[RMDB]
RNA sequence: GGGAACGACUCGAGUAGAGUCGAAAAAGUUUCCAAUUCGUUGGAAACUACUGUCGGUAUGCGGAAUAUAAAAUCCUCCGCUUAAGGAUUUUACCGACUUAAAGUACACUAGUUUCGACUAGUGUAAACAGUGAUAGUUUUUCGAAACUAUCACUGUAAAAGAAACAACAACAACAAC
Reactivity to 2A3 in 0.01 (KOAc 150mM, MgCl2 10mM, bicine 150mM(pH8.5), 24C), signal-to-noise 4, nucleotides 027 to 126: a000g010u010u010u000c000c000a000a010u070u040c160g030u030u000g000g000a010a010a000c010u040a060c020u030g010u010c010g000g000u040a060u100g000c010g010g070a080a020u160a030u060a100a130a050a080u060c020c020u000c010c010g100c040u020u070a050a020g050g010a040u050u130u110u190a010c000c010g000a000c000u000u100a090a060a000g050u020a000c010a000c000u000a000g000u030u050u070c060g050a010c000u000a000g010u000g000u020a010a020
Reactivity to DMS in 0.01 (KOAc 150mM, MgCl2 10mM, bicine 150mM(pH8.5), 24C), signal-to-noise 6, nucleotides 027 to 126: a300g000u000u000u000c000c000a010a020u000u010c160g020u000u000g000g000a020a000a010c000u000a050c080u000g010u000c000g000g000u000a030u010g000c010g010g010a060a030u010a090u010a090a070a140a110u010c270c050u000c010c020g020c030u000u000a060a080g010g000a110u010u010u010u000a030c000c000g000a010c000u010u010a050a070a110g010u000a010c000a000c000u000a000g010u000u000u020c200g010a030c000u000a000g010u000g000u000a010a090